Structure probing data (DMS and 2A3) for a 207-nucleotide construct. For 2A3 the reverse transcriptase was SuperScript II with manganese. High 2A3 reactivity points to a flexible backbone, as in loops and unpaired stretches. It was measured as part of the RMDB library OK3TST. Values cover nucleotides 27 to 156.
RNA sequence: GGGAACGACUCGAGUAGAGUCGAAAAUCGCGGUCACAAUCCCGUGGGCCAAAUAAUCGCGCUAGAAGCAGUUCCAACCAGCGCCAGCCUGCCUCUACUGUAAAACCUGAUAUGGCCGAAGAAAUUGCUGCUCUUGUUUUGGCUAAGCUCGGUAAAGCUUAACCGUAUUUUUCGAAAUACGGUUAAGAAAAGAAACAACAACAACAAC
Reactivity to DMS in 0.01 (KOAc 150mM, MgCl2 10mM, bicine 150mM(pH8.5), 24C), signal-to-noise 3, nucleotides 027 to 156: u000c030g040c010g030g040u000c100a090c080a100a180u000c020c010c000g010u000g000g020g010c010c020a040a120a150u010a080a090u020c040g020c020g030c070u000a060g030a080a100g010c000a090g020u000u000c030c010a080a140c050c020a080g030c040g030c040c040a070g010c060c010u010g020c040c010u000c010u000a070c060u000g000u000a070a050a070a090c030c040u010g010a120u010a080u010g020g020c000c020g000a120a130g010a050a090a110u000u000g000c030u000g000c010u000c050u000u000g020u000u000u000u000g010g040c030u010a060a090g040c030u000c010g020g010u000a060a090a140g010
Reactivity to 2A3 in 0.01 (KOAc 150mM, MgCl2 10mM, bicine 150mM(pH8.5), 24C), signal-to-noise 4, nucleotides 027 to 156: u050c020g000c040g040g020u030c070a020c050a170a100u060c000c010c020g010u080g010g040g000c010c010a060a080a010u150a040a060u120c050g000c010g010c110u040a030g050a120a020g050c030a010g020u080u040c040c020a050a050c000c040a040g010c020g010c040c020a010g010c010c000u050g010c020c000u030c020u060a090c020u050g030u160a010a050a070a120c010c030u030g030a050u050a060u240g050g000c000c010g040a040a020g040a050a100a060u130u120g010c030u010g000c010u020c000u030u070g050u060u030u020u030g000g000c010u020a090a020g020c020u040c060g050g020u090a090a090a020g010